[RMDB]
RNA sequence: GGGAACGACUCGAGUAGAGUCGAAAAUGACAACAACAGCGUCUACACGUCAAACCACAAGGGCGCGACCGCGUUUGACUACAACUGGUCGGACCAUCCGAUGGGCAACGCCCUGGCCGGCUGGCACGGCAGCGUCCUGAUCUCCGGUGAGCAGGAGCAAUUAACCGUAGUUCGCUACGGUUAAUUGAAAAGAAACAACAACAACAAC
Reactivity to DMS in 0.01 (KOAc 150mM, MgCl2 10mM, bicine 150mM(pH8.5), 24C), signal-to-noise 4, nucleotides 027 to 156: u010g020a120c040a110a100c030a090a120c050a090g020c050g010u000c030u000a140c080a130c050g000u000c030a080a100a120c050c030a110c070a090a040g010g010g010c010g030c060g000a070c040c010g030c030g000u010u000u000g010a160c070u000a110c050a040a060c040u010g020g000u000c000g020g000a070c010c040a070u000c060c060g010a150u000g000g010g000c030a100a130c120g000c020c000c010u000g020g020c000c000g030g000c030u010g010g010c040a030c020g000g030c020a090g010c020g020u000c000c000u000g010a070u000c000u000c010c050g020g010u000g010a120g020c020a100g020g020a100g010
Reactivity to 2A3 in 0.01 (KOAc 150mM, MgCl2 10mM, bicine 150mM(pH8.5), 24C), signal-to-noise 6, nucleotides 027 to 156: u090g030a010c010a060a000c020a050a010c020a130g060c040g070u040c060u140a050c100a030c120g060u050c040a050a100a090c030c020a050c040a110a040g000g000g000c010g000c010g040a080c010c010g040c060g050u060u090u150g110a100c060u110a080c110a150a040c030u040g000g010u000c030g010g090a240c010c010a060u140c060c070g130a150u140g000g010g000c080a210a110c230g000c010c000c000u000g010g000c000c000g000g010c000u020g010g000c030a010c040g020g000c010a020g000c000g000u000c000c010u020g010a040u010c000u000c010c000g050g030u080g060a030g040c090a080g000g010a010g000
An RNA of 207 nucleotides, treated with DMS and 2A3 and read out base by base. Conditions: 150 mM KOAc, 10 mM MgCl2 and 150 mM bicine (pH 8.5), 24 C. Source: RMDB library OK3TST, as collected in RNAgym. For 2A3, 8,451 sequencing reads were counted.